[RMDB]
The record gives the reactivity of an RNA of 177 nucleotides to DMS and 2A3.
RNA sequence: GGGAACGACUCGAGUAGAGUCGAAAACGUGAACAUCGCUCUGCUAAGUCCCGUCGUUCUUCCAGUCAGAGCGAGAUUGUAAGCAACCUUAUGCGCAAUGAAGACAUAGAGGGACUUCUUGAAGAAGACCUGACGUAGUGUUCGCACUACGUCAGGUAAAAGAAACAACAACAACAAC
Reactivity to DMS in 0.01 (KOAc 150mM, MgCl2 10mM, bicine 150mM(pH8.5), 24C), signal-to-noise 2, nucleotides 027 to 126: c150g000u020g000a120a030c130a130u000c000g040c000u020c010u000g000c060u000a090a060g000u010c050c040c000g030u020c070g040u000u000c020u020u060c020c090a050g000u050c020a000g000a010g020c010g000a000g020a110u000u020g020u010a090a170g040c060a080a110c040c080u000u000a010u010g030c020g000c040a040a060u000g000a120a050g000a080c070a040u000a040g050a020g020g000g010a030c020u010u000c050u000u020g030a120a140g010a080a100g000
Reactivity to 2A3 in 0.01 (KOAc 150mM, MgCl2 10mM, bicine 150mM(pH8.5), 24C), signal-to-noise 3, nucleotides 027 to 126: c030g170u200g120a020a020c010a120u020c000g000c010u000c000u000g050c040u080a000a040g060u040c050c020c010g030u020c020g000u020u080c000u120u020c020c000a050g080u100c000a000g000a000g000c060g020a000g000a040u030u030g020u130a000a120g000c000a010a110c040c030u050u170a060u090g000c010g000c010a010a100u170g030a030a030g070a020c000a070u140a020g120a040g000g000g000a000c000u020u050c010u070u150g090a130a110g040a030a000g040

The DMS profile rests on 3,196 reads.
Conditions: 150 mM KOAc, 10 mM MgCl2 and 150 mM bicine (pH 8.5), 24 C.
2A3 adducts were read by reverse transcription with SuperScript II with manganese.